[RMDB]
Structure probing data (2A3) for a 207-nucleotide construct.
RNA sequence: GGGAACGACUCGAGUAGAGUCGAAAAACGGAUGGUACGCCAUCCGACCAUUGGGUAGAAGCGUCCAAUCAGCACCGUGACGGUGCAGAUGGGAAAUUGCCCAUGAUACGCACCAUACGUGGUGCGAAAAAGCCAUCGGUGUUCGCACCGAUGGCAAGGCGAAAUUAUACUUCGGUAUAAUUUCGCCAAAAGAAACAACAACAACAAC
Reactivity to 2A3 in 0.01 (KOAc 150mM, MgCl2 10mM, bicine 150mM(pH8.5), 24C), signal-to-noise 2, nucleotides 027 to 156: a000c000g000g010a000u000g010g010u030a040c140g030c050c000a000u010c000c000g020a010c010c000a110u060u090g010g000g030u060a030g010a230a080g130c080g110u000c010c000a030a200u000c010a020g000c000a010c000c000g230u270g240a220c240g020g000u000g000c000a000g000a000u010g050g000g000a060a140a080u090u040g040c000c000c000a000u040g030a020u020a020c000g000c000a000c000c000a010u030a070c240g070u010g000g000u000g000c000g000a030a000a000a000a020g000c000c000a000u000c000g000g000u000g060u060u020c120g010c170a000c000c000g000a000u000g000g000c010a000a040
Reactivities are rounded to 0.1 and cut off at 0 and 3. The data come from the RNA Mapping Database (RMDB), library M2RFPK. For 2A3, 1,015 sequencing reads were counted.